[RMDB]
RNA sequence: GGGAACGACUCGAGUAGAGUCGAAAAACGUGACGGACAGAGAUGCUGUGCUCCACGCAGUUCUAGGAUGUGACGUGGUGAUCCACACCGCUGGAGUGGUAGACGUGUGGGGACGCGUAGACGAAAACUUGCUGUACGAUAUUAACGUGGAAGGUACCCUCACGGUGUGCUUCGGCACACCGUGAGGAAAAGAAACAACAACAACAAC
Reactivity to 2A3 in 0.01 (KOAc 150mM, MgCl2 10mM, bicine 150mM(pH8.5), 24C), signal-to-noise 1, nucleotides 027 to 156: a010c010g000u060g040a020c050g000g030a030c020a020g070a010g010a030u040g000c020u030g070u110g160c000u000c000c000a000c010g000c030a080g010u190u020c060u070a140g020g080a120u070g040u080g130a000c000g020u070g010g000u020g070a110u100c050c030a080c000a000c000c000g010c020u020g000g120a120g030u120g060g070u000a040g000a050c010g010u000g040u040g000g000g000g050a040c000g040c020g000u030a030g050a050c080g120a050a000a010a050c060u050u070g000c010u000g030u060a000c040g050a060u020a050u280u270a050a080c040g000u010g130g000a000a090g080g000u180a140c010
Source: RMDB library OK3TST, as collected in RNAgym. The record gives the reactivity of an RNA of 207 nucleotides to 2A3.